[RMDB]
RNA sequence: GGGAACGACUCGAGUAGAGUCGAAAAGAAGCGAUGAUCCUCGAGGGGACCAGACGGUCGCCACGAUGAGGCGUUGGCCUCAUCAGCCCGUCGAGGGGAGCUAGUGGCGAGCCCGACCCGGGAGUGCGAUUGUGCCACGAUUCGUCGUGGCACAAUCAAAAGAAACAACAACAACAAC
Reactivity to 2A3 in 0.01 (KOAc 150mM, MgCl2 10mM, bicine 150mM(pH8.5), 24C), signal-to-noise 3, nucleotides 027 to 126: g140a020a000g010c050g150a240u020g010a000u000c010c000u000c040g000a020g000g020g020g000a030c060c020a070g150a150c090g040g010u030c000g010c000c000a020c070g020a000u020g030a000g080g000c050g090u140u300g300g010c000c000u010c000a000u000c000a020g030c000c010c000g150u030c030g000a010g000g000g000g010a000g030c040u160a020g010u000g020g000c000g010a000g000c000c000c000g090a170c030c010c000g000g020g000a150g070u190g060c060
Reactivity to DMS in 0.01 (KOAc 150mM, MgCl2 10mM, bicine 150mM(pH8.5), 24C), signal-to-noise 2, nucleotides 027 to 126: g030a100a030g020c020g010a060u020g040a020u020c010c000u000c010g030a030g000g000g010g070a110c090c020a200g010a150c170g000g010u000c020g030c000c000a060c160g000a030u010g010a020g030g010c010g020u000u040g000g030c010c000u020c000a000u000c000a040g030c000c010c000g030u000c010g000a060g000g000g000g020a030g000c030u010a070g010u000g000g000c000g020a040g000c040c000c020g010a160c020c020c010g000g010g010a090g000u000g000c160

Description: Conditions: 150 mM KOAc, 10 mM MgCl2 and 150 mM bicine (pH 8.5), 24 C. Structure probing data (2A3 and DMS) for a 177-nucleotide construct. Values cover nucleotides 27 to 126. For 2A3, 1,433 sequencing reads were counted. For 2A3 the reverse transcriptase was SuperScript II with manganese.